[RMDB]
RNA sequence: GGGAACGACUCGAGUAGAGUCGAAAAGGUCAUCUUUCACAGGAUCGUGUGGAAGUCCUGCUCGGGGCGGAAGCAUUAAAACCAUUCGAGCUAGUCAAUGCGUGGCGUGUCUCUCCGCAGCGUGUUGUGUAUGAGAGUGGAUUCGUCCACUCUCAAAACGCUUCAAUCAAUUCGUUGAUUGAAGCGUAAAAGAAACAACAACAACAAC
Reactivity to 2A3 in 0.01 (KOAc 150mM, MgCl2 10mM, bicine 150mM(pH8.5), 24C), signal-to-noise 3, nucleotides 027 to 156: g050g000u120c070a150u050c050u000u010u010c030a010c000a040g110g120a300u160c150g150u080g020u020g040g020a010a010g010u050c000c000u040g030c050u030c030g020g000g080g010c010g000g020a030a010g030c030a020u070u110a060a030a040a040c000c030a010u050u100c090g030a030g040c190u170a060g220u090c040a010a010u030g030c010g070u020g020g000c010g000u020g070u020c030u000c000u000c060c010g000c030a020g080c030g040u030g000u020u000g020u000g040u010a050u080g000a000g000a000g000u000g000g010a000u050u020c090g030u000c010c000a000c000u010c000u000c000a000a000a000
Reactivity to DMS in 0.01 (KOAc 150mM, MgCl2 10mM, bicine 150mM(pH8.5), 24C), signal-to-noise 2, nucleotides 027 to 156: g050g010u010c010a080u000c020u000u000u010c040a050c030a240g030g030a090u000c150g000u000g000u000g000g000a060a110g000u010c030c000u020g020c050u000c030g020g010g020g000c020g040g030a130a110g010c070a180u000u000a070a090a090a110c000c010a070u010u000c050g010a050g010c040u000a070g030u000c040a050a040u000g030c020g030u000g000g040c120g000u000g010u010c050u030c080u000c070c010g000c030a060g000c020g040u030g040u020u020g020u000g010u020a120u000g000a030g000a060g050u000g020g000a050u000u030c300g020u010c000c020a000c010u000c010u010c000a000a020a030